Structure probing data (DMS and 2A3) for a 177-nucleotide construct. The 2A3 profile rests on 1,967 reads. The reactions ran in a buffer of 150 mM KOAc, 10 mM MgCl2 and 150 mM bicine (pH 8.5), at 24 C. For 2A3 the reverse transcriptase was SuperScript II with manganese.
RNA sequence: GGGAACGACUCGAGUAGAGUCGAAAAUGGAGAGGACGUACGUGGAGGAGGCGAUGGACGAGACGAAGAAGCCUGAGAUCUGCGAAAGCUCUCAGGGCCGACAAGGAGAGGAGGGAGAGGUGGAGCAAUCCAUGGGUAGGUUCGCCUACCCAUGGAUAAAAGAAACAACAACAACAAC
Reactivity to DMS in 0.01 (KOAc 150mM, MgCl2 10mM, bicine 150mM(pH8.5), 24C), signal-to-noise 3, nucleotides 027 to 126: u010g010g020a100g030a140g000g010a030c130g010u000a030c040g020u000g000g020a120g000g000a100g000g010c090g000a120u010g000g000a100c110g000a150g020a080c120g000a110a090g000a180a120g010c020c010u000g000a030g020a040u000c070u030g030c230g000a110a110a050g000c120u000c000u010c010a010g000g020g000c020c040g010a130c160a090a160g000g020a150g010a130g000g010a140g000g020g010a070g000a070g020g000u020g010g030a070g010c170a050
Reactivity to 2A3 in 0.01 (KOAc 150mM, MgCl2 10mM, bicine 150mM(pH8.5), 24C), signal-to-noise 3, nucleotides 027 to 126: u130g020g020a050g020a030g050g000a030c060g010u080a000c070g040u120g040g020a100g020g010a010g000g030c040g040a040u110g020g010a030c030g030a030g020a040c030g000a090a060g030a040a030g070c000c000u000g000a010g000a030u050c020u040g010c040g180a240a010a000g010c010u000c000u010c010a010g000g000g020c020c000g060a100c040a120a000g010g010a050g020a030g120g050a060g000g000g040a050g000a020g040g040u140g020g000a060g000c050a010
For DMS the reverse transcriptase was MarathonRT.